[RMDB]
Overview
Source: RMDB library OK1LIB, as collected in RNAgym. This 177-nucleotide RNA was probed chemically with 2A3 and DMS. 2A3 is a SHAPE reagent: it acylates the 2'-hydroxyl of flexible nucleotides of all four kinds.
RNA sequence: GGGAACGACUCGAGUAGAGUCGAAAAGCACCUCUGGCCAAUGAGACGCAGACUGAGAAAGGAUCCCUCUUAGGGAUUUCACCUCUUGCAGCUCCAAAUAUAGACUUGGAUAAUGGUGUGGCCUAAGGGAGUCCGAUACCUUCGGGUAUCGGAUUCCAAAAGAAACAACAACAACAAC
Reactivity to 2A3 in 0.01 (KOAc 150mM, MgCl2 10mM, bicine 150mM(pH8.5), 24C), signal-to-noise 9, nucleotides 027 to 126: g020c010a020c010c000u030c050u040g090g000c010c000a030a040u080g020a020g020a050c030g000c010a010g040a110c060u100g010a010g040a070a080a040g050g010a010u010c010c030c000u050c140u090u270a090g000g020g000a000u030u050u110c040a040c010c010u020c000u030u050g010c010a020g010c010u000c020c010a010a100a000u230a030u050a060g040a010c030u010u020g020g010a020u060a090a070u130g010g010u020g000u030g040g010c000c000u010a030a020g080
Reactivity to DMS in 0.01 (KOAc 150mM, MgCl2 10mM, bicine 150mM(pH8.5), 24C), signal-to-noise 9, nucleotides 027 to 126: g000c040a060c010c000u010c120u010g020g010c020c010a050a080u020g000a060g000a070c060g020c030a050g000a100c160u000g010a050g010a090a210a160g000g000a030u000c000c010c000u010c250u040u020a070g010g010g010a010u010u000u010c030a180c260c020u000c020u010u000g000c030a080g020c050u000c020c160a030a050a070u040a130u040a100g000a010c150u010u000g000g000a050u030a060a070u010g000g010u010g000u010g010g020c020c000u000a070a070g020
Notes:
Conditions: 150 mM KOAc, 10 mM MgCl2 and 150 mM bicine (pH 8.5), 24 C. For 2A3 the reverse transcriptase was SuperScript II with manganese.